Overview: Chemical mapping of a 177-nucleotide RNA with 2A3 and DMS. For 2A3 the reverse transcriptase was SuperScript II with manganese. The DMS profile rests on 80,638 reads. The reactions ran in a buffer of 150 mM KOAc, 10 mM MgCl2 and 150 mM bicine (pH 8.5), at 24 C.

[RMDB]
RNA sequence: GGGAACGACUCGAGUAGAGUCGAAAACAGCGUCUUGCUGGGACACCGUUUUUCAUUUGUCGGUCCCUGGCCACGUGCCAGCGUGCCAUCAGCAGUAUAUCAUCCGCACUAAGAUGCUGCUGUCCGGCUAAUAUUUCCUAUUCGUAGGAAAUAUUAGAAAAGAAACAACAACAACAAC
Reactivity to 2A3 in 0.01 (KOAc 150mM, MgCl2 10mM, bicine 150mM(pH8.5), 24C), signal-to-noise 9, nucleotides 027 to 126: c020a010g020c010g060u100c100u180u300g010c030u040g010g020g020a020c030a040c050c030g020u030u020u020u080u120c170a220u080u080u180g110u080c030g010g020u030c020c000c000u020g020g000c030c020a150c160g070u220g040c020c010a030g020c030g060u060g020c010c020a060u060c000a030g010c010a000g020u050a060u030a020u240c060a040u060c040c050g080c050a050c090u060a090a030g020a040u020g000c000u000g000c000u010g030u030c020c030g020g000
Reactivity to DMS in 0.01 (KOAc 150mM, MgCl2 10mM, bicine 150mM(pH8.5), 24C), signal-to-noise 9, nucleotides 027 to 126: c030a040g010c040g010u020c060u030u030g020c060u010g000g000g010a070c080a090c050c040g010u010u000u010u010u010c100a110u020u020u010g010u010c030g000g000u010c050c030c010u010g000g000c040c040a070c170g010u030g010c060c070a080g000c070g010u010g010c030c030a070u030c010a000g000c010a020g010u010a040u010a070u020c070a120u010c040c030g000c050a060c080u010a140a130g010a040u000g000c000u000g000c010u000g010u020c080c050g010g010